[RMDB]
RNA sequence: GGGAACGACUCGAGUAGAGUCGAAAAGAAUGCCAUAGGGGCCGAAAUCCGAUGCCAUUUCGCGGGUCAGCGCGGCAAGGGCUGCCUUGGAUGUGGCAUAGGCAGUUCCGGCAAAGGGGUGCACGCACCCUGGUCGAUGAUUCGUCAUCGACCAGGGAAAAGAAACAACAACAACAAC
Reactivity to DMS in 0.01 (KOAc 150mM, MgCl2 10mM, bicine 150mM(pH8.5), 24C), signal-to-noise 2, nucleotides 027 to 126: g010a140a070u000g000c040c010a110u010a140g010g020g010g010c030c010g000a010a060a070u010c030c010g010a070u000g000c000c010a080u000u000u010c030g010c100g020g000g010u010c050a040g030c010g010c090g020g000c260a120a090g010g010g020c010u010g000c010c010u000u010g010g020a030u000g000u000g000g000c010a040u000a050g030g010c290a060g030u010u000c030c000g000g000c020a030a050a170g010g020g000g010u000g000c050a080c200g030c090a150
Reactivity to 2A3 in 0.01 (KOAc 150mM, MgCl2 10mM, bicine 150mM(pH8.5), 24C), signal-to-noise 1, nucleotides 027 to 126: g020a060a030u070g010c030c000a030u120a050g140g000g120g000c030c040g030a050a020a030u000c010c010g010a030u040g000c000c000a030u010u030u020c150g020c050g060g000g080u190c060a010g000c090g000c000g070g070c080a050a070g020g110g010c010u020g000c010c000u040u130g070g000a080u040g080u030g040g040c030a010u010a000g000g030c000a020g000u080u060c020c000g000g000c040a000a030a050g000g010g000g000u050g000c080a040c090g020c020a090
This 177-nucleotide RNA was probed chemically with DMS and 2A3.
For 2A3, 1,455 sequencing reads were counted.
Conditions: 150 mM KOAc, 10 mM MgCl2 and 150 mM bicine (pH 8.5), 24 C.
The DMS profile rests on 2,036 reads.